[RMDB]
Record summary
Chemical mapping of a 177-nucleotide RNA with 2A3 and DMS. The RNA was probed in 150 mM KOAc, 10 mM MgCl2 and 150 mM bicine (pH 8.5) at 24 C.
RNA sequence: GGGAACGACUCGAGUAGAGUCGAAAAGGCCUCGCGUUCGCGCGAGGCCAAAUUAAAUGGGCAAGCGGCACCGUCCGCGAAAACAAACGGAAAUUGGAAUAAAAAGCUAACCGUUCGCGGUUAGCAACCUAACCUAGAUGUUCGCAUCUAGGUUAGGAAAAGAAACAACAACAACAAC
Reactivity to 2A3 in 0.01 (KOAc 150mM, MgCl2 10mM, bicine 150mM(pH8.5), 24C), signal-to-noise 1, nucleotides 027 to 126: g080g000c030c000u020c030g000c020g000u040u080c210g010c000g080c000g050a020g000g010c000c010a000a000a000u000u000a000a000a000u090g030g130g000c060a080a050g020c080g020g010c030a020c060c020g130u110c000c010g000c000g010a020a040a000a030c000a000a040a000c040g000g050a020a120a040u190u160g130g050a100a050u130a200a130a050a010a010g000c000u000a010a000c020c000g040u020u040c220g000c010g150g000u020u000a000g010c000a000a010
Reactivity to DMS in 0.01 (KOAc 150mM, MgCl2 10mM, bicine 150mM(pH8.5), 24C), signal-to-noise 1, nucleotides 027 to 126: g010g010c010c000u000c030g040c030g030u010u040c140g020c010g050c000g040a040g020g040c010c000a000a000a010u000u010a030a020a100u000g000g010g010c110a110a240g010c010g000g000c000a120c010c000g000u000c000c010g030c000g000a060a040a020a150c120a000a020a020c000g010g000a030a070a080u000u010g010g010a120a090u030a020a070a030a070a140g010c010u000a000a000c010c000g010u000u000c210g000c030g040g000u000u000a010g000c020a020a020